[RMDB]
RNA sequence: GGGAACGACUCGAGUAGAGUCGAAAAGAUAUGGAAUCACCCUUUUGACGACGGGGAGGGUCGGAAACGACCUGAAAGACGUCGAUAAGGUUGAUUCCUAAGUCAAAGACCUCGUUCGCGAGGUCAAGCUUGUUUUUAAGUUCGCUUAAAAACAAGCAAAAGAAACAACAACAACAAC
Reactivity to 2A3 in 0.01 (KOAc 150mM, MgCl2 10mM, bicine 150mM(pH8.5), 24C), signal-to-noise 5, nucleotides 027 to 126: g010a030u090a040u160g000g000a010a000u010c000a000c000c000c000u000u020u030u100g120a050c030g000a010c020g010g000g070g040a150g030g030g000u010c010g000g000a030a060a040c010g010a010c000c000u000g010a010a010a010g110a010c000g000u000c040g020a050u070a120a010g000g010u010u010g000a000u000u010c000c000u000a060a020g040u010c040a090a060a100g000a000c000c030u000c010g010u040u040c270g000c000g140a000g030g010u000c000a000a000
Reactivity to DMS in 0.01 (KOAc 150mM, MgCl2 10mM, bicine 150mM(pH8.5), 24C), signal-to-noise 6, nucleotides 027 to 126: g000a030u010a300u000g000g000a020a010u000c000a020c030c000c010u000u000u000u000g010a080c020g020a120c000g000g010g020g020a300g000g000g020u000c010g010g000a050a070a180c000g010a010c000c000u000g000a090a080a100g020a080c020g020u000c010g000a040u000a020a010g010g010u000u000g010a010u000u000c000c000u000a000a070g000u000c030a070a120a100g000a010c000c000u000c000g010u000u010c200g020c010g000a010g010g000u000c010a020a060